[RMDB]
RNA sequence: GGGAACGACUCGAGUAGAGUCGAAAAGCCUUACCAUGUACCUCUGAGGGUUCCUAACAACGAGGCCUAUUCAACAUGUCUCUGGAUGCCUGGUUCCAAAGAUGUGGACCAAUGCUAGUCGCAUGUCAUCUUAUGACAGUUUCGACUGUCAUAAGAUAAAAGAAACAACAACAACAAC
Reactivity to DMS in 0.01 (KOAc 150mM, MgCl2 10mM, bicine 150mM(pH8.5), 24C), signal-to-noise 9, nucleotides 027 to 126: g010c010c010u000u000a110c120c060a080u000g010u010a100c050c020u000c030u000g010a110g010g000g010u000u000c010c020u000a080a070c170a050a080c090g000a060g010g010c120c070u010a100u010u000c100a080a100c040a040u000g000u000c030u000c020u000g000g000a050u000g010c090c090u000g000g010u000u000c010c020a040a080a100g020a070u000g010u000g010g000a060c040c050a040a050u000g010c040u000a070g010u000c140g010c030a030u000g000u000c110
Reactivity to 2A3 in 0.01 (KOAc 150mM, MgCl2 10mM, bicine 150mM(pH8.5), 24C), signal-to-noise 9, nucleotides 027 to 126: g040c010c000u010u020a070c030c020a080u110g040u090a050c010c010u040c050u060g040a080g010g050g000u030u030c020c000u050a090a050c060a040a030c060g030a020g040g000c010c010u180a170u070u110c030a030a030c010a060u040g040u000c010u000c000u040g040g020a040u080g050c020c060u040g030g020u070u000c010c010a050a100a060g170a120u110g080u130g050g010a010c010c010a050a030u110g010c020u030a030g050u060c010g000c050a020u040g050u060c020
Chemical mapping of a 177-nucleotide RNA with DMS and 2A3. Values cover nucleotides 27 to 126. It was measured as part of the RMDB library OK2TRN. The RNA was probed in 150 mM KOAc, 10 mM MgCl2 and 150 mM bicine (pH 8.5) at 24 C.